[RMDB]
RNA sequence: GGGAACGACUCGAGUAGAGUCGAAAAGAUAUGGAUGAUCUGACUUCCGUAGAUAAUUCCUCGGAAACGAGGAAUUGUAGGAAGGUCAGAGUCAUCCUAAGUCAAAACUGCAGCUUCGGCUGCAGAAGUCAAUAAGGACGUUCGCGUCCUUAUUGACAAAAGAAACAACAACAACAAC
Reactivity to DMS in 0.01 (KOAc 150mM, MgCl2 10mM, bicine 150mM(pH8.5), 24C), signal-to-noise 2, nucleotides 027 to 126: g020a040u000a300u010g010g000a010u000g000a070u000c010u020g010a090c000u000u000c000c000g030u020a140g010a030u010a010a000u000u000c000c000u000c000g000g010a110a080a230c010g010a000g010g000a000a010u000u000g020u000a070g010g000a060a020g030g020u010c000a040g010a050g020u000c010a010u010c000c000u000a030a120g000u010c040a070a130a150a160c010u010g000c010a000g000c020u000u020c300g030g010c000u000g000c010a000g000a070a100
Reactivity to 2A3 in 0.01 (KOAc 150mM, MgCl2 10mM, bicine 150mM(pH8.5), 24C), signal-to-noise 1, nucleotides 027 to 126: g010a000u100a020u230g020g000a000u030g010a010u000c000u010g000a000c000u030u000c020c000g040u100a000g010a030u010a050a010u010u020c000c020u010c010g030g000a120a060a020c060g010a000g030g040a000a020u000u020g010u020a010g030g030a020a100g130g050u010c010a020g020a030g060u040c000a000u030c000c000u000a140a030g010u000c020a020a000a110a210c020u010g000c000a020g000c000u090u150c300g270g000c020u060g000c000a000g000a000a000
The record gives the reactivity of an RNA of 177 nucleotides to DMS and 2A3. DMS adducts were read by reverse transcription with MarathonRT. Values cover nucleotides 27 to 126. In probing experiments dimethyl sulfate is read out at A N1 and C N3, which are open when not base-paired.